RNA sequence: GGGAACGACUCGAGUAGAGUCGAAAAUGAGCUAUCUCCACAGAUCAGAAAUUGGGAAAUUGGAUGAGACAUCACUUCGUGCAGCAUUAAGUCUGACGUGUGCUGGAAUUCGAAAGACGAAUAGAUCCCGUAUCAUUUAAUUCGUUAAAUGAUACGGAAAAGAAACAACAACAACAAC
Reactivity to 2A3 in 0.01 (KOAc 150mM, MgCl2 10mM, bicine 150mM(pH8.5), 24C), signal-to-noise 9, nucleotides 027 to 126: u150g010a010g030c030u050a040u080c020u030c040c010a070c020a070g070a050u040c000a020g140a100a130a060u130u070g050g010g030a020a060a060u070u060g070g030a050u050g040a030g030a040c020a030u050c010a020c050u110u080c050g040u100g070c020a010g000c000a030u110u160a130a020g030u010c020u020g020a020c020g060u050g000u020g030c040u040g020g060a050a050u030u020c010g030a080a040a030g070a040c040g020a020a010u060a070g080a050u050c000
Reactivity to DMS in 0.01 (KOAc 150mM, MgCl2 10mM, bicine 150mM(pH8.5), 24C), signal-to-noise 8, nucleotides 027 to 126: u030g000a080g010c050u010a070u010c040u010c020c050a090c150a060g000a080u020c060a080g000a040a060a080u040u020g000g010g000a050a070a080u010u010g000g010a050u010g000a100g000a100c090a060u010c050a060c050u010u020c050g020u020g000c020a020g000c020a060u020u030a080a070g010u010c010u000g000a070c040g010u000g010u010g010c060u010g000g000a060a060u010u000c030g010a060a070a070g010a120c060g000a060a060u010a090g010a100u020c090
An RNA of 177 nucleotides, treated with 2A3 and DMS and read out base by base.